This 207-nucleotide RNA was probed chemically with DMS and 2A3. High 2A3 reactivity points to a flexible backbone, as in loops and unpaired stretches. DMS adducts were read by reverse transcription with MarathonRT. The reactions ran in a buffer of 150 mM KOAc, 10 mM MgCl2 and 150 mM bicine (pH 8.5), at 24 C.

[RMDB]
RNA sequence: GGGAACGACUCGAGUAGAGUCGAAAACGUGUCCGUCCGCGUAGCCGACAACAUGCCCAGGUAGCCCAGACCUUCAAGGCUACGGUGCGUUGCGACGCACGGUCUGAUUCUUCACAACGACGUUCACAAGAUCGGAUCACUUUCGAGUGAUCCGAAACCCUGUACACUAAUUCGUUAGUGUACAGGGAAAAGAAACAACAACAACAAC
Reactivity to DMS in 0.01 (KOAc 150mM, MgCl2 10mM, bicine 150mM(pH8.5), 24C), signal-to-noise 2, nucleotides 027 to 156: c060g010u000g010u000c040c070g020u030c000c070g030c050g000u020a110g010c040c000g000a150c010a050a120c050a080u000g010c030c000c090a140g020g050u000a040g030c020c020c080a230g000a090c080c010u000u000c080a050a200g010g000c000u000a020c020g010g030u000g010c030g020u010u000g000c120g030a090c010g000c020a040c020g030g000u000c040u000g010a220u000u000c070u020u010c070a080c050a070a130c030g010a090c050g010u010u000c020a040c050a090a100g010a130u000c000g000g000a000u010c010a020c000u010u000u010c290g000a030g030u000g010a010u000c010c000g030a000a040a040
Reactivity to 2A3 in 0.01 (KOAc 150mM, MgCl2 10mM, bicine 150mM(pH8.5), 24C), signal-to-noise 7, nucleotides 027 to 156: c020g020u020g020u040c060c050g020u050c070c030g030c060g050u090a040g080c050c020g050a050c010a110a020c020a080u110g020c000c010c010a020g040g000u020a040g030c020c040c080a030g030a020c010c000u050u050c040a040a020g010g000c000u010a010c000g010g010u000g000c010g010u030u130g050c140g090a010c000g010c010a000c010g000g000u020c020u030g030a060u110u010c050u110u090c080a050c030a190a090c090g110a020c030g040u040u090c050a040c020a150a060g050a180u030c010g000g000a000u000c000a000c000u040u070u080c100g100a010g000u000g000a000u000c010c000g000a000a000a000